[RMDB]
RNA sequence: GGGAACGACUCGAGUAGAGUCGAAAAGCCCCACGCUUCGGCGUGGGGCAAAUAAAAUCAGCGGUAAGCUGGCGUAAAUUAUUACCGCUGAACGCCAGCUUAAAACACCCUUGUUCGCAAGGGUGAACUACGAGUUAAUCUUCGGAUUAACUCGUAGAAAAGAAACAACAACAACAAC
Reactivity to 2A3 in 0.01 (KOAc 150mM, MgCl2 10mM, bicine 150mM(pH8.5), 24C), signal-to-noise 1, nucleotides 027 to 126: g050c000c030c020c000a010c010g010c030u080u150c300g130g000c000g010u010g010g050g020g000c000a010a000a000u050a000a010a000a060u100c040a030g020c000g070g050u050a040a000g020c020u010g010g040c010g010u070a120a170a020u180u100a070u080u110a090c020c020g000c020u000g050a020a000c030g010c010c020a000g000c050u060u090a020a070a070a060c000a000c000c010c020u000u000g010u060u080c260g000c070a000a000g000g000g000u010g000a010a010
Reactivity to DMS in 0.01 (KOAc 150mM, MgCl2 10mM, bicine 150mM(pH8.5), 24C), signal-to-noise 1, nucleotides 027 to 126: g010c000c000c000c000a010c030g010c000u000u010c190g020g000c020g080u000g020g010g010g000c000a000a000a050u020a030a090a060a030u000c080a050g020c060g020g010u000a000a000g000c020u000g000g020c070g020u000a080a060a060u010u010a070u010u000a070c040c040g010c060u000g000a020a020c030g000c000c000a020g000c050u000u020a040a090a130a220c000a010c010c000c000u000u010g020u000u010c140g000c010a000a010g000g000g030u000g010a000a080
The data come from the RNA Mapping Database (RMDB), library M2PK50. An RNA of 177 nucleotides, treated with 2A3 and DMS and read out base by base. For 2A3, 1,291 sequencing reads were counted. The DMS profile rests on 1,161 reads. For 2A3 the reverse transcriptase was SuperScript II with manganese.